Structure probing data (DMS and 2A3) for a 177-nucleotide construct. The data come from the RNA Mapping Database (RMDB), library OK1LIB. Conditions: 150 mM KOAc, 10 mM MgCl2 and 150 mM bicine (pH 8.5), 24 C. The 2A3 profile rests on 6,252 reads. For 2A3 the reverse transcriptase was SuperScript II with manganese.
[RMDB]
RNA sequence: GGGAACGACUCGAGUAGAGUCGAAAACGCACUGUCAACAAGCAUGGCGAUGAGAUCAUCACCUCCACCACCAGCAACUAUGAGACCCAGACUUUCUCAUCCAAGACUGAGUGGAGGGUCAGGGCCACACAGAGGAGGUAUUCGUACCUCCUCUGUGAAAAGAAACAACAACAACAAC
Reactivity to DMS in 0.01 (KOAc 150mM, MgCl2 10mM, bicine 150mM(pH8.5), 24C), signal-to-noise 4, nucleotides 027 to 126: c060g030c020a130c050u030g000u010c000a090a140c120a060a120g000c070a080u000g000g000c020g000a080u000g000a140g020a030u020c030a040u020c050a130c000c000u030c010c010a050c000c080a150c080c040a000g020c040a140a110c170u020a040u030g000a030g000a050c140c040c040a080g000a080c150u030u010u010c000u020c040a000u010c210c130a070a120g010a170c060u020g010a080g000u000g010g000a090g000g010g010u000c060a080g000g010g000c010c020a240
Reactivity to 2A3 in 0.01 (KOAc 150mM, MgCl2 10mM, bicine 150mM(pH8.5), 24C), signal-to-noise 3, nucleotides 027 to 126: c030g030c020a060c060u060g030u150c030a050a070c010a100a090g060c080a080u070g010g000c040g070a040u100g050a060g050a130u110c010a000u040c020a050c020c010u010c010c010a020c000c000a030c010c000a010g020c000a040a070c040u070a040u050g020a030g030a030c000c020c040a040g030a090c070u100u180u010c010u020c020a080u060c030c050a090a070g110a300c040u010g020a030g040u030g010g000a030g000g000g000u000c000a000g030g020g010c000c010a030